[RMDB]
RNA sequence: GGGAACGACUCGAGUAGAGUCGAAAAACUCUUACUUCGGUAAGAGUAAAAAGAUAUGGAUCCCGAAGACGCGAUAAGCGUGACCAUCGGAAACGAUGGUACGCUUUUGACGCGUUUAGGGAUCCUAAGUCAAAAAAUGCUACCUUCGGGUAGCAAAGUAUUCAGCUAUAUUCGUAUAGCUGAAUACAAAAGAAACAACAACAACAAC
Reactivity to DMS in 0.01 (KOAc 150mM, MgCl2 10mM, bicine 150mM(pH8.5), 24C), signal-to-noise 2, nucleotides 027 to 156: a050c010u000c000u000u000a000c000u010u000c300g080g000u000a010a050g000a040g030u000a000a040a060a080a060g020a110u000a260u030g010g000a010u000c000c010c000g000a220a260g000a000c010g040c010g000a290u000a050a030g000c020g000u000g020a020c000c010a020u000c000g000g000a190a120a200c000g000a030u010g000g010u000a000c000g020c000u010u010u000u000g010a250c080g000c010g020u000u000u000a300g000g010g000a010u000c000c040u010a010a020g020u010c030a010a010a100a110a110a150u000g010c000u000a010c010c000u020u000c300g030g040g020u000a000g000c000a000a000a080
Reactivity to 2A3 in 0.01 (KOAc 150mM, MgCl2 10mM, bicine 150mM(pH8.5), 24C), signal-to-noise 3, nucleotides 027 to 156: a020c000u000c000u000u000a000c000u030u060c230g070g000u000a000a010g000a000g000u000a000a010a000a000a000g020a000u040a020u070g000g000a000u010c000c010c010g010a030a020g020a010c010g010c010g030a060u020a080a010g000c010g000u030g180a070c000c000a000u010c000g020g030a080a030a030c010g000a000u000g000g000u000a000c000g000c000u040u020u020u070g070a060c030g010c010g010u060u130u020a000g040g000g000a000u000c000c000u000a010a010g000u020c020a010a000a010a050a040a090u080g000c000u010a000c000c000u020u050c180g130g000g000u000a000g000c000a000a000a000

This 207-nucleotide RNA was probed chemically with DMS and 2A3. DMS adducts were read by reverse transcription with MarathonRT. Conditions: 150 mM KOAc, 10 mM MgCl2 and 150 mM bicine (pH 8.5), 24 C.